RNA sequence: GGGAACGACUCGAGUAGAGUCGAAAAGAUAUGGAAAGCUAAGACAGAUGCAGUGACCACGUCGGAAACGAUAUCAACUGUCAUUCGAGCUUUCCUAAGUCAAAACGGCCAGGUUCGCCUGGCCGAACCACACAAAAUCGUUCGCGAUUUUGUGUGGAAAAGAAACAACAACAACAAC
Reactivity to DMS in 0.01 (KOAc 150mM, MgCl2 10mM, bicine 150mM(pH8.5), 24C), signal-to-noise 2, nucleotides 027 to 126: g000a010u010a300u000g030g000a030a010a000g000c020u000a130a060g030a090c300a150g020a020u000g010c060a020g000u010g000a200c300c150a080c210g020u000c020g020g010a050a100a070c000g010a050u000a090u000c090a050a050c010u000g000u010c030a140u000u000c040g000a000g030c030u000u000u000c010c000u000a000a090g000u020c020a080a020a110a260c010g000g020c050c020a000g000g040u000u000c240g020c000c000u000g000g020c000c000g000a040a030
Reactivity to 2A3 in 0.01 (KOAc 150mM, MgCl2 10mM, bicine 150mM(pH8.5), 24C), signal-to-noise 2, nucleotides 027 to 126: g020a000u040a000u070g000g000a030a000a020g000c030u090a250a130g070a060c070a070g140a210u200g110c030a010g000u000g050a030c100c000a170c240g160u110c060g010g050a000a010a050c010g010a010u000a010u160c060a060a160c050u030g120u220c040a060u040u090c040g020a000g000c010u020u000u000c000c000u010a050a000g050u020c000a010a010a030a170c000g000g000c010c010a000g040g070u010u070c270g090c070c000u000g000g000c010c000g000a000a000

Description:
Chemical mapping of a 177-nucleotide RNA with DMS and 2A3. It was measured as part of the RMDB library TTRDEL. Conditions: 150 mM KOAc, 10 mM MgCl2 and 150 mM bicine (pH 8.5), 24 C. For 2A3, 1,991 sequencing reads were counted. Values cover nucleotides 27 to 126.